[RMDB]
RNA sequence: GGGAACGACUCGAGUAGAGUCGAAAAGAUCAAUUCGUUGAUCGGCUAGGGGUCUCGGGAGACGACCGACUUUCAACAGCCUGAAGCCUCCACGGGACAUGAAAGGGGUCGUCGACGAUCGAGACGGAGGCACCCAUCACCCCGGUUUCGACCGGAAGUAUGCCCACUAAUUCGUUAGUGGGCAUACAAAAGAAACAACAACAACAAC
Reactivity to 2A3 in 0.01 (KOAc 150mM, MgCl2 10mM, bicine 150mM(pH8.5), 24C), signal-to-noise 2, nucleotides 027 to 156: g020a030u020c010a020a080u150u110c220g050u170u010g000a010u010c010g000g010c040u070a070g000g130g110g020u030c020u010c010g010g000g010a010g000a010c020g000a010c000c010g300a300c090u040u030u010c110a210a170c050a090g070c000c000u080g090a230a050g040c030c010u100c060c000a050c020g010g020g050a140c010a270u070g000a000a000a000g030g040g010g020u000c000g000u010c000g040a040c000g030a030u050c000g000a000g000a010c020g000g040a030g000g000c020a040c060c000c020a010u090c110a100c040c020c000c010g060g040u130u140u110c200g010a030c000c000g000g000a010a050
Record summary
The record gives the reactivity of an RNA of 207 nucleotides to 2A3. 2A3 adducts were read by reverse transcription with SuperScript II with manganese. It was measured as part of the RMDB library RNAMAK.